[RMDB]
This 177-nucleotide RNA was probed chemically with DMS and 2A3. For DMS, 621 sequencing reads were counted. As a SHAPE reagent, 2A3 marks flexible, mostly unpaired nucleotides at the ribose 2'-OH. The reactions ran in a buffer of 150 mM KOAc, 10 mM MgCl2 and 150 mM bicine (pH 8.5), at 24 C. Reactivities are rounded to 0.1 and cut off at 0 and 3. DMS adducts were read by reverse transcription with MarathonRT. It was measured as part of the RMDB library OK2TST. DMS (dimethyl sulfate) methylates the pairing face of unpaired adenines and cytosines.

RNA sequence: GGGAACGACUCGAGUAGAGUCGAAAAGCGCGCGAUCUCGAUUACGCGCGCCACGGGCUGCGCUUUCUGCGCGACGCGCACUGGGACGCCGAGCACGAAGGCUACGACUGGGAAAUCGAAUGGCGCACGGCGCAUAGGUGUUCGCACCUAUGCGCCGAAAAGAAACAACAACAACAAC
Reactivity to DMS in 0.01 (KOAc 150mM, MgCl2 10mM, bicine 150mM(pH8.5), 24C), signal-to-noise 1, nucleotides 027 to 126: g000c010g000c010g020c000g020a090u000c140u000c110g020a130u010u000a170c030g020c000g020c010g000c010c110a020c090g000g000g000c300u000g020c020g050c000u000u000u000c080u020g010c000g020c030g020a040c220g000c040g020c050a170c260u000g000g050g020a070c010g000c010c020g020a080g020c080a150c070g000a050a100g000g010c010u000a020c090g000a030c090u000g020g010g020a110a120a170u000c080g010a080a070u000g000g000c020g000c010a180
Reactivity to 2A3 in 0.01 (KOAc 150mM, MgCl2 10mM, bicine 150mM(pH8.5), 24C), signal-to-noise 1, nucleotides 027 to 126: g010c030g010c000g000c000g070a140u060c050u060c150g090a120u070u160a040c030g000c020g000c010g000c010c000a050c040g020g030g030c060u060g010c040g000c040u060u130u110c110u090g020c000g050c000g090a050c040g020c010g000c030a060c080u070g000g040g010a040c040g030c060c000g030a030g020c050a020c100g050a100a020g000g000c010u040a050c060g120a020c040u030g000g000g040a020a040a010u100c040g010a050a100u130g050g020c030g030c050a020